[RMDB]
RNA sequence: GGGAACGACUCGAGUAGAGUCGAAAAUAGAAAGGGCAUGGACAACAGCUGAUCGUGUUGGGAUUGAUCCCGGCUUGAGGCGUUGCCCAGAGCAGAUCUUGGUUGUAGUAGCGAGUACUCCACCUGGAGAGGAGUGGCAACACAACCCCGCUGUGUGGUCUGUAAGUGUGUUCGCACACUUACAGACAAAAGAAACAACAACAACAAC
Reactivity to 2A3 in 0.01 (KOAc 150mM, MgCl2 10mM, bicine 150mM(pH8.5), 24C), signal-to-noise 1, nucleotides 027 to 156: u160a010g080a020a010a000g060g000g000c040a000u010g020g000a020c000a020a040c030a070g020c020u070g050a100u090c070g030u050g000u070u070g060g000g020a080u090u300g090a120u110c010c000c000g010g010c000u030u100g010a000g000g010c000g040u000u000g000c000c000c010a020g000a000g000c050a010g030a050u070c020u060u110g000g030u020u030g020u010a150g000u020a000g010c080g040a060g100u000a030c000u020c000c020a110c010c050u220g050g060a060g020a040g010g000a010g010u000g020g050c010a030a020c010a000c000a040a030c030c000c010c010g080c010u030g030u030g030u040g160
Conditions: 150 mM KOAc, 10 mM MgCl2 and 150 mM bicine (pH 8.5), 24 C.
An RNA of 207 nucleotides, treated with 2A3 and read out base by base.
High 2A3 reactivity points to a flexible backbone, as in loops and unpaired stretches.